[RMDB]
RNA sequence: GGGAACGACUCGAGUAGAGUCGAAAAUUUUGGCGAUCGCACGCAAGUGCCUGUAGACCACACAAUUAUCGAACGCUAUUCUACGCACUACAUUCAUAAACUUGUGUUUAAUGUGCCGGCUCGACAGCCACCUAGUAUAUUAGUUAUGCGCGAAAUGCUUGCCAUAAAAGUUCGCUUUUAUGGCAAGAAAAGAAACAACAACAACAAC
Reactivity to DMS in 0.01 (KOAc 150mM, MgCl2 10mM, bicine 150mM(pH8.5), 24C), signal-to-noise 2, nucleotides 027 to 156: u010u000u000u000g040g020c000g040a120u000c080g010c040a020c100g010c140a140a130g020u010g000c010c010u010g000u000a130g020a120c000c000a100c060a090c030a070a080u000u020a130u000c040g000a040a050c000g000c040u000a100u000u010c040u000a050c100g010c030a110c040u000a050c040a060u000u000c060a080u000a040a070a050c110u010u010g000u010g020u000u000u000a020a110u000g040u000g030c050c060g060g000c060u000c020g040a090c060a100g000c020c010a060c040c030u000a090g020u000a100u000a120u010u030a090g020u000u000a020u020g020c030g000c040g000a070a120a100u000g030
Reactivity to 2A3 in 0.01 (KOAc 150mM, MgCl2 10mM, bicine 150mM(pH8.5), 24C), signal-to-noise 5, nucleotides 027 to 156: u120u100u030u050g050g000c020g040a030u080c040g020c030a030c030g030c050a070a020g010u010g060c010c030u060g040u060a040g020a090c050c030a040c010a000c020a050a130u180u120a070u260c100g040a100a050c060g000c050u100a120u150u060c030u090a030c060g040c040a020c050u130a060c040a120u030u160c060a060u130a130a120a120c060u080u070g020u010g040u110u060u080a140a110u090g020u020g050c000c050g010g000c040u030c020g070a030c020a010g000c010c000a010c000c010u020a040g030u040a090u020a040u180u130a050g050u090u050a050u150g050c090g030c020g000a030a050a070u100g010
Overview: This 207-nucleotide RNA was probed chemically with DMS and 2A3. For DMS, 3,249 sequencing reads were counted. DMS adducts were read by reverse transcription with MarathonRT. Conditions: 150 mM KOAc, 10 mM MgCl2 and 150 mM bicine (pH 8.5), 24 C. 2A3 adducts were read by reverse transcription with SuperScript II with manganese. Values cover nucleotides 27 to 156.